[RMDB]
RNA sequence: GGGAACGACUCGAGUAGAGUCGAAAAAGCCUGCUCGGUCUGAUCCAGCAGCGCCUUGCGCGCGCCGGUGUUCAGCACGUCCACUUCCUGACGAACCCACCAUGGCACAACCUGAUCCGAAGCACGGUACUGAUAGAUGCUUCGGCAUCUAUCAGUAAAAAGAAACAACAACAACAAC
Reactivity to DMS in 0.01 (KOAc 150mM, MgCl2 10mM, bicine 150mM(pH8.5), 24C), signal-to-noise 4, nucleotides 027 to 126: a090g000c010c020u000g000c000u000c030g010g000u020c040u000g000a150u030c010c010a100g000c080a100g020c060g010c010c020u010u010g020c120g020c020g040c040g010c040c050g010g020u020g000u000u010c040a070g010c070a070c060g000u000c030c050a110c060u000u010c020c000u000g040a080c070g010a060a100c040c030c010a110c020c040a050u010g000g000c020a060c070a070a080c040c030u010g000a050u010c020c010g000a120a110g000c050a040c080g010g020
Reactivity to 2A3 in 0.01 (KOAc 150mM, MgCl2 10mM, bicine 150mM(pH8.5), 24C), signal-to-noise 8, nucleotides 027 to 126: a000g020c010c000u020g010c020u020c020g020g040u020c060u060g020a070u050c000c010a020g030c030a020g010c000g030c020c010u180u290g040c100g000c000g000c010g000c050c020g050g000u050g040u080u090c030a020g030c030a010c040g030u030c010c010a030c030u070u050c010c020u030g020a050c040g030a060a100c020c010c010a020c020c010a080u110g030g000c030a010c010a070a050c020c010u040g030a070u010c010c010g040a070a010g070c080a020c110g050g020